Structure probing data (2A3 and DMS) for a 207-nucleotide construct.
[RMDB]
RNA sequence: GGGAACGACUCGAGUAGAGUCGAAAAUAUUGAAUUAUGUACUUUUACUCUAUCUGCGCAGCAGAGCCAAGGAGUCAAUCCUCUCAUUAUCUGGAACUUCUAUAAACCAGCAUUCAAUAAAAAACUAAGUAGAUGAAGAGACAGGAGUAUUUGAUCACUAUAUCAAUAGUUUCGACUAUUGAUAUAGAAAAGAAACAACAACAACAAC
Reactivity to 2A3 in 0.01 (KOAc 150mM, MgCl2 10mM, bicine 150mM(pH8.5), 24C), signal-to-noise 2, nucleotides 027 to 156: u170a050u040u090g010a060a110u150u040a150u220g040u080a060c020u070u100u160u070a050c030u000c010u010a020u070c000u000g000c300g000c070a130g010c000a000g020a000g000c050c080a090a050g060g010a000g010u010c040a010a190u010c030c000u000c010u010c030a050u020u230a140u120c020u000g060g000a080a100c000u110u000c080u190a160u080a170a120a130c040c010a000g000c000a040u070u030c050a020a110u210a220a090a040a040a050a040c050u080a110a000g020u030a020g040a090u060g010a060a060g020a010g030a050c060a060g050g020a000g010u010a060u060u100u180g060a020u100c030a000
Reactivity to DMS in 0.01 (KOAc 150mM, MgCl2 10mM, bicine 150mM(pH8.5), 24C), signal-to-noise 1, nucleotides 027 to 156: u010a070u000u010g020a090a110u000u020a070u010g010u010a070c020u000u000u000u000a070c010u000c000u000a070u000c010u000g100c050g060c130a160g000c030a090g050a180g020c060c000a080a100g000g010a050g000u000c170a050a270u000c000c000u000c050u010c040a020u000u000a040u010c020u040g020g050a160a120c040u000u010c000u000a130u000a090a060a130c040c060a050g000c060a060u000u000c040a090a180u060a060a040a070a180a120a090c050u000a020a090g000u020a090g040a120u020g020a090a130g060a180g040a180c060a070g010g040a090g020u000a100u000u000u000g040a130u010c040a240
Conditions: 150 mM KOAc, 10 mM MgCl2 and 150 mM bicine (pH 8.5), 24 C. For 2A3 the reverse transcriptase was SuperScript II with manganese. The data come from the RNA Mapping Database (RMDB), library OK3TST.